[RMDB]
RNA sequence: GGGAACGACUCGAGUAGAGUCGAAAAGAUAUGGACCUGUCCGAGGCGAGGAUCUCGGAAACGAGGGAGCCUGGGACACGGGUCCUAAGUCAAAACAAUUCCGCUCAGUUCGCUGAGCGGAAUUGAACAGCACAAUAUAGUUCGCUAUAUUGUGCUGAAAAGAAACAACAACAACAAC
Reactivity to 2A3 in 0.01 (KOAc 150mM, MgCl2 10mM, bicine 150mM(pH8.5), 24C), signal-to-noise 3, nucleotides 027 to 126: g010a010u070a070u190g000g000a000c000c010u020g010u000c000c040g300a000g000g000c020g060a240g020g020a020u000c000u000c010g020g000a070a050a000c000g000a010g000g000g010a000g010c010c020u050g070g010g020a030c050a010c050g090g030g000u000c000c000u010a080a000g040u040c050a010a020a090a160c010a010a000u000u010c000c000g000c000u010c000a050g060u090u150c250g010c170u010g000a000g020c000g000g000a000a010u000u000g000a000a010
Reactivity to DMS in 0.01 (KOAc 150mM, MgCl2 10mM, bicine 150mM(pH8.5), 24C), signal-to-noise 4, nucleotides 027 to 126: g010a070u000a300u010g000g010a020c010c000u000g020u000c000c000g010a030g010g010c000g000a080g020g000a050u010c000u000c000g000g000a050a050a150c010g000a030g020g000g010a070g020c010c000u000g000g010g010a020c020a010c180g020g020g000u000c000c010u000a020a080g010u000c030a090a100a130a230c020a010a010u000u000c000c000g000c010u000c010a020g010u000u010c250g000c010u000g000a010g010c000g010g000a000a000u000u000g000a070a170

Chemical mapping of a 177-nucleotide RNA with 2A3 and DMS. It was measured as part of the RMDB library TTRDEL. The 2A3 profile rests on 10,534 reads. Values are in units of 0.01, from 0 to 300, in steps of 10.